[RMDB]
RNA sequence: GGGAACGACUCGAGUAGAGUCGAAAAAAGCCAGAAAUGAGACCGUUCUUUUUGGAGAAGACAACGUGUGGGUGAGUGACAAGAAACCAAGGAUCUCCUUCAAGUUCUUUGUCACGUCACCUAACAAGGAGCCAUGUCUUUUCGAAGACAUGGCUCCAAAAGAAACAACAACAACAAC
Reactivity to 2A3 in 0.01 (KOAc 150mM, MgCl2 10mM, bicine 150mM(pH8.5), 24C), signal-to-noise 1, nucleotides 027 to 126: a000a010g190c190c070a110g120a010a130a070u300g000a130g100a060c210c000g300u080u000c070u000u000u000u000u000g150g000a040g060a020a020g080a060c000a010a010c070g110u100g000u000g030g000g000u000g000a000g000u000g100a000c000a000a000g000a010a060a010c000c000a000a000g160g000a260u050c270u070c130c000u030u030c000a000a000g070u000u000c000u030u170u220g000u000c000a000c090g040u000c000a000c000c000u060a000a000c000a000a000